[RMDB]
RNA sequence: GGGAACGACUCGAGUAGAGUCGAAAAUAUGAUCUUUCAAUUAUUAAUGCACGUAUUAAAGCUAAGCACAUUGUCUAUGUAGGAGAUCCAGCACAGUUGCCAGCUCCUAGGACUUUGUUGACUAGAGACACAUGGGCCUUCGGGCCCAUGAAAAGAAACAACAACAACAAC
Reactivity to 2A3 in 0.01 (KOAc 150mM, MgCl2 10mM, bicine 150mM(pH8.5), 24C), signal-to-noise 1, nucleotides 027 to 129: u170a040u000g000a110u030c000u000u000u000c050a050a050u160u000a130u100u160a260a120u000g000c140a000c090g000u040a000u040u040a280a000a000g010c080u110a040a020g000c000a000c000a000u030u030g050u000c070u000a140u290g050u100a030g000g000a120g000a000u000c020c160a020g000c090a000c000a130g170u150u010g000c030c000a020g020c010u070c030c000u000a000g000g030a000c000u000u000u000g000u000u000g090a030c040u000a000g000a000g080a000c000a000
Reactivity to DMS in 0.01 (KOAc 150mM, MgCl2 10mM, bicine 150mM(pH8.5), 24C), signal-to-noise 3, nucleotides 027 to 129: u070a110u000g030a200u000c020u000u060u000c110a120a050u070u000a060u030u000a080a080u000g030c220a060c160g000u050a060u060u040a060a090a050g000c000u000a040a120g010c070a030c080a020u000u040g000u000c040u030a240u040g000u040a070g000g000a030g000a000u010c110c070a000g000c020a050c130a120g000u080u030g050c080c070a080g040c000u010c020c020u000a080g000g080a000c070u180u040u000g000u050u040g000a090c010u000a020g030a130g000a060c130a000